This 207-nucleotide RNA was probed chemically with 2A3 and DMS. 2A3 adducts were read by reverse transcription with SuperScript II with manganese. For DMS, 2,792 sequencing reads were counted. Reactivities are given for positions 27 through 156.
RNA sequence: GGGAACGACUCGAGUAGAGUCGAAAAUCAAGGGUUUCGACCCUUGAAAAAAAGCGUACUACGGAGCCCACGAGGGCGAUAAGUCCCAAAUAGGACUUUUGACGCCUGAGUGGGAACUACUCCGUAUCGCAAAAAGUUAUACUUUCGAGUAUAACAAUGUUACUGUUUAGUUCGCUAAACAGUAACAAAAAGAAACAACAACAACAAC
Reactivity to 2A3 in 0.01 (KOAc 150mM, MgCl2 10mM, bicine 150mM(pH8.5), 24C), signal-to-noise 2, nucleotides 027 to 156: u020c000a000a000g010g000g010u020u040u260c240g140a100c000c020c040u000u050g000a010a010a000a000a000a000a020g010c040g040u080a030c040u000a000c010g000g000a000g020c000c020c000a000c000g010a050g010g010g000c010g030a020u010a030a000g000u040c000c000c030a130a300a100u270a070g000g000a000c000u070u120u070u090g180a150c040g000c000c000u010g010a010g000u000g000g000g000a000a000c000u050a010c010u000c000c000g010u000a000u000c000g000c020a050a140a000a000a000g010u000u000a000u000a000c000u080u100u180c290g060a000g000u000a000u000a010a000c000a000a020
Reactivity to DMS in 0.01 (KOAc 150mM, MgCl2 10mM, bicine 150mM(pH8.5), 24C), signal-to-noise 2, nucleotides 027 to 156: u010c020a040a060g000g010g000u000u000u010c230g010a020c000c000c010u000u010g000a000a000a030a120a070a120a140g010c010g000u010a050c050u000a000c020g010g000a020g020c000c000c000a020c010g000a300g000g010g070c010g000a090u000a030a060g000u010c000c000c000a070a100a270u010a000g020g010a020c010u020u010u000u010g000a120c070g000c000c000u010g000a300g010u000g000g000g020a010a020c080u010a280c000u000c000c000g000u000a000u010c010g000c000a080a050a080a120a140g000u000u000a010u000a010c000u000u010u000c300g000a110g050u000a030u000a000a010c010a070a110
It was measured as part of the RMDB library RNAMAK.